[RMDB]
RNA sequence: GGGAACGACUCGAGUAGAGUCGAAAAGGCUGGAACCCGGGGUAGCCACCUUGGACUGUGAGGGGAGCCACGUGCUGGGAACCGUGGAGCAACAAGGCAGGAGGCAGGGACCCUCGUGGCUGUGGAGCGCUCCUUUGACAUUCGUGUCAAAGGAGCGAAAAGAAACAACAACAACAAC
Reactivity to DMS in 0.01 (KOAc 150mM, MgCl2 10mM, bicine 150mM(pH8.5), 24C), signal-to-noise 1, nucleotides 027 to 126: g010g040c060u020g030g000a120a130c080c040c040g000g000g010g010u000a080g030c050c060a050c030c030u010u000g030g010a130c030u010g020u010g010a220g010g010g000g030a120g020c020c010a020c040g010u000g020c060u010g000g030g050a080a130c030c000g040u020g010g000a150g030c100a070a110c130a100a080g010g020c050a040g010g000a060g030g010c100a110g000g000g000a170c090c030c020u000c110g040u000g010g010c050u000g000u000g000g000a080g010
Reactivity to 2A3 in 0.01 (KOAc 150mM, MgCl2 10mM, bicine 150mM(pH8.5), 24C), signal-to-noise 1, nucleotides 027 to 126: g000g040c010u010g060g090a100a080c090c020c050g030g040g000g030u070a070g100c030c030a030c040c000u010u020g000g040a050c040u050g070u120g100a000g000g030g030g000a010g020c000c000a010c040g060u090g100c040u030g000g060g050a050a010c020c020g020u050g000g080a090g070c020a020a080c010a060a000g080g000c080a030g030g020a010g080g000c050a040g080g050g000a050c060c000c000u040c000g000u050g000g050c040u000g080u080g110g020a040g030

Chemical mapping of a 177-nucleotide RNA with DMS and 2A3.
Reactivities are given for positions 27 through 126.
Source: RMDB library OK2TST, as collected in RNAgym.
Conditions: 150 mM KOAc, 10 mM MgCl2 and 150 mM bicine (pH 8.5), 24 C.
2A3 adducts were read by reverse transcription with SuperScript II with manganese.